[RMDB]
RNA sequence: GGGAACGACUCGAGUAGAGUCGAAAACGGAGCGUGCUGGCGUGUUGAAACGUCAGGCGCUGAAAUAUGCGUUAGGGUUGUAGCCUUACAACAUUGCCGGAUGCGUGCCAACCGUAGGUCGGAUAAGAAGUGCCCACUAUUUCGAUAGUGGGCACUUAAAAGAAACAACAACAACAAC
Reactivity to DMS in 0.01 (KOAc 150mM, MgCl2 10mM, bicine 150mM(pH8.5), 24C), signal-to-noise 1, nucleotides 027 to 126: c100g000g010a060g030c010g040u000g020c020u000g020g020c010g050u030g020u010u000g000a080a160a030c010g010u010c030a050g000g010c000g010c000u000g010a030a060a200u000a080u000g000c030g030u000u000a080g010g010g000u000u000g010u010a050g000c100c090u010u000a100c090a060a070c050a050u000u000g020c030c020g010g000a050u000g000c080g000u000g000c040c050a070a130c070c020g000u000a090g030g020u000c010g000g000a140u000a050a110g020
The record gives the reactivity of an RNA of 177 nucleotides to DMS. The DMS profile rests on 1,370 reads. It was measured as part of the RMDB library OK2TRN. The RNA was probed in 150 mM KOAc, 10 mM MgCl2 and 150 mM bicine (pH 8.5) at 24 C.